[RMDB]
RNA sequence: GGGAACGACUCGAGUAGAGUCGAAAAGAUAUGGACCGAGGCAUCGAUCUACCAGUCGGAAACGACUGUGUAGGGAGCCUCGUCCUAAGUCAAAAGGUCGUAAAGCAGUUCGCUGCUUUACGACCAACUCAACCAAUAUGUUCGCAUAUUGGUUGAGAAAAGAAACAACAACAACAAC
Reactivity to DMS in 0.01 (KOAc 150mM, MgCl2 10mM, bicine 150mM(pH8.5), 24C), signal-to-noise 5, nucleotides 027 to 126: g000a040u000a300u010g000g010a010c070c060g010a000g000g010c010a270u000c120g010a090u010c000u000a010c000c000a010g010u010c000g000g000a080a060a160c010g000a020c000u000g000u010g010u010a010g010g010g010a040g010c000c000u000c000g000u010c000c000u010a020a080g000u000c030a060a080a140a110g010g010u000c000g000u010a010a000a000g010c000a010g010u000u010c240g010c010u010g020c000u000u000u010a010c000g000a000c000c000a000a020
Reactivity to 2A3 in 0.01 (KOAc 150mM, MgCl2 10mM, bicine 150mM(pH8.5), 24C), signal-to-noise 5, nucleotides 027 to 126: g020a000u050a020u110g000g000a030c120c220g010a050g000g010c060a300u180c220g160a110u050c060u000a010c000c010a000g000u000c000g000g030a060a030a030c010g010a000c010u010g060u140g010u060a000g020g030g000a000g000c000c000u000c010g000u010c000c000u010a040a020g030u010c030a000a040a080a200g010g000u010c000g000u010a000a000a000g000c000a000g000u060u200c270g070c190u010g000c000u000u000u000a000c000g000a000c000c000a000a000